[RMDB]
RNA sequence: GGGAACGACUCGAGUAGAGUCGAAAAUAUACAUCAGAAGUCGGCACAACUCCCGACUCGCGGUGAGCGAUGCAGCGUAGCGCGAGCUACGCAGCUGCUGUGCGGAUGGCUAGCUACUGCUAGCCUACCCAGUAUACUGGUUCGCCAGUAUACUGGGAAAAGAAACAACAACAACAAC
Reactivity to 2A3 in 0.01 (KOAc 150mM, MgCl2 10mM, bicine 150mM(pH8.5), 24C), signal-to-noise 9, nucleotides 027 to 126: u160a010u030a030c050a040u090c020a030g080a160a010g080u020c010g020g090c140a040c040a300a300c110u060c010c000c000g020a020c000u000c010g010c050g010g070u130g030a030g000c030g110a130u140g020c040a020g000c010g000u020a000g000c030g010c050g050a030g010c000u000a000c000g000c000a000g000c000u050g000c000u020g020u070g050c040g070g060a070u110g020g000c000u010a000g000c010u140a120c070u300g000c000u000a000g000c000c000u010a010
Reactivity to DMS in 0.01 (KOAc 150mM, MgCl2 10mM, bicine 150mM(pH8.5), 24C), signal-to-noise 7, nucleotides 027 to 126: u040a090u050a130c050a050u000c030a090g010a080a030g010u000c000g000g010c210a100c110a110a150c260u020c100c000c000g010a030c060u000c020g000c300g020g010u010g000a120g000c070g010a070u020g010c010a030g010c010g010u010a010g020c000g010c300g000a170g010c010u000a000c000g020c010a020g020c010u020g000c040u010g020u000g010c070g000g000a090u020g010g000c000u000a000g000c000u010a120c220u030g000c000u000a010g000c000c010u000a000